Source information: This 177-nucleotide RNA was probed chemically with 2A3 and DMS. The 2A3 profile rests on 1,584 reads. Values cover nucleotides 27 to 126. The reactions ran in a buffer of 150 mM KOAc, 10 mM MgCl2 and 150 mM bicine (pH 8.5), at 24 C. Source: RMDB library OK1LIB, as collected in RNAgym.
[RMDB]
RNA sequence: GGGAACGACUCGAGUAGAGUCGAAAACAGAUAGGGGUCCCUUAACCACCAUCCUCCGUGAAAUCAAUAUCCCGCACAAGAGUGCUACUCUCCUCGCUCCGGGCCCAUAACACUUGGGGGUAGCUAACGGUAAUCCUCAUUUCGAUGAGGAUUACCGAAAAGAAACAACAACAACAAC
Reactivity to 2A3 in 0.01 (KOAc 150mM, MgCl2 10mM, bicine 150mM(pH8.5), 24C), signal-to-noise 3, nucleotides 027 to 126: c030a010g080a040u170a030g020g000g010g040u080c000c000c000u030u060a050a090c040c010a040c010c010a070u050c010c020u000c020c010g090u050g060a090a070a000u070c040a100a000u060a070u160c000c000c000g060c040a030c000a100a050g040a050g120u060g020c030u050a060c000u010c020u070c010c000u060c090g010c000u000c000c010g030g000g020c000c000c000a050u090a130a070c120a020c040u040u040g000g020g000g010g000u000a020g010c000u030a080a010
Reactivity to DMS in 0.01 (KOAc 150mM, MgCl2 10mM, bicine 150mM(pH8.5), 24C), signal-to-noise 2, nucleotides 027 to 126: c070a040g000a040u010a100g010g010g020g050u030c000c020c040u010u000a190a070c010c040a020c080c060a050u010c060c040u000c010c000g040u000g000a040a090a080u000c030a190a040u030a120u000c000c000c040g000c160a120c270a130a040g000a110g000u000g000c050u010a030c000u000c000u030c000c000u000c080g050c030u000c070c060g030g000g030c030c020c040a030u000a090a100c160a120c010u020u010g010g010g040g000g000u020a030g000c030u000a160a090